This 207-nucleotide RNA was probed chemically with DMS and 2A3. The RNA was probed in 150 mM KOAc, 10 mM MgCl2 and 150 mM bicine (pH 8.5) at 24 C. 2A3 is a SHAPE reagent: it acylates the 2'-hydroxyl of flexible nucleotides of all four kinds. Source: RMDB library RNAMAK, as collected in RNAgym. Reactivities are given for positions 27 through 156. Values are in units of 0.01, from 0 to 300, in steps of 10. For DMS, 5,869 sequencing reads were counted.
RNA sequence: GGGAACGACUCGAGUAGAGUCGAAAAAGGUCCUUCGGGACCUCCGCGCGCGUACUACUUGAAGGGAGUCCGAGACCUACCCACCUGCUCCCAAAUAGGAGCAGAGGGUCGAGGACGAAGAACUUCAAGUAUCGCUAUCUACAGCCUUCGGGCUGAAUAAUAGUACCUGUUUCGACAGGUACUAUUAAAAAGAAACAACAACAACAAC
Reactivity to DMS in 0.01 (KOAc 150mM, MgCl2 10mM, bicine 150mM(pH8.5), 24C), signal-to-noise 4, nucleotides 027 to 156: a030g010g030u000c010c000u000u000c300g050g010g000a020c010c000u000c020c040g020c160g000c100g020c000g050u010a060c140u000a030c000u010u000g010a030a040g030g010g000a300g010u010c010c010g000a300g010a010c010c010u000a050c030c010c030a300c120c000u010g000c020u000c000c000c010a050a170a280u000a050g010g000a030g040c010a020g000a130g010g010g000u010c010g000a300g020g000a060c000g020a050a090g010a100a120c010u010u010c010a080a040g020u000a020u010c010g000c040u000a060u000c020u000a230c010a010g010c010c000u000u010c300g020g020g050c000u010g000a060a090
Reactivity to 2A3 in 0.01 (KOAc 150mM, MgCl2 10mM, bicine 150mM(pH8.5), 24C), signal-to-noise 3, nucleotides 027 to 156: a000g040g000u000c000c020u000u060c230g060g000g000a010c010c010u010c000c030g160c030g040c010g000c030g060u150a100c050u000a000c000u050u030g010a000a000g010g000g030a020g010u010c000c010g010a010g000a000c010c000u060a110c090c020c000a040c000c010u000g000c000u020c000c020c040a150a280a090u250a110g000g000a000g000c000a010g010a000g000g000g000u000c000g000a000g000g000a000c000g000a040a020g020a000a000c000u000u000c010a000a000g000u000a000u040c030g000c010u010a050u020c070u110a060c000a010g030c000c000u140u200c300g050g000g030c030u020g000a020a020